Chemical mapping of a 207-nucleotide RNA with 2A3 and DMS.
The 2A3 profile rests on 929 reads.
2A3 adducts were read by reverse transcription with SuperScript II with manganese.
Conditions: 150 mM KOAc, 10 mM MgCl2 and 150 mM bicine (pH 8.5), 24 C.
Source: RMDB library M2RFPK, as collected in RNAgym.
DMS adducts were read by reverse transcription with MarathonRT.
RNA sequence: GGGAACGACUCGAGUAGAGUCGAAAAGCUCUGUAAUGGGAUGGGAUCCGAAGCCCCAUUGAGGGAUAAAACAGGCUCUCCCAUCCAACUCCUAUUCCAACACGUCCUCGUCGUACAGAGUGGUAACUAAGGUAUAGCUCCUUCGGGAGCUAUACAAGAAGAAUGACUACUUCGGUAGUCAUUCUUCAAAAGAAACAACAACAACAAC
Reactivity to 2A3 in 0.01 (KOAc 150mM, MgCl2 10mM, bicine 150mM(pH8.5), 24C), signal-to-noise 2, nucleotides 027 to 156: g010c020u000c010u040g030u100a190a130u180g140g010g010a020u000g000g010g000a050u180c020c010g030a050a070g020c000c000c000c090a100u150u210g060a300g000g020g000a060u110a060a200a010a030c110a030g000g000c010u030c000u000c020c010c010a010u000c000c000a000a020c010u020c010c010u030a100u120u150c040c000a120a040c020a030c060g080u080c000c030u060c050g080u030c010g000u060a020c000a010g000a000g010u060g040g020u110a140a080c070u040a020a160g140g000u010a010u000a010g010c000u010c000c020u070u040c140g030g010g000a000g050c000u000a000u000a000c000a000a010
Reactivity to DMS in 0.01 (KOAc 150mM, MgCl2 10mM, bicine 150mM(pH8.5), 24C), signal-to-noise 1, nucleotides 027 to 156: g020c010u000c000u000g010u010a030a070u000g020g010g010a030u040g000g020g010a050u000c010c040g000a130a210g000c000c000c000c000a300u040u010g010a230g040g010g010a120u000a040a110a090a190c060a190g000g000c040u000c070u010c000c010c000a050u000c010c020a060a040c060u030c060c000u000a030u010u030c040c000a090a110c120a080c090g000u000c010c060u010c040g010u000c040g010u010a050c030a050g020a080g000u000g000g000u020a090a140c050u010a070a090g020g010u000a010u000a010g000c000u010c000c000u020u000c300g090g040g010a010g080c000u010a000u000a000c000a050a120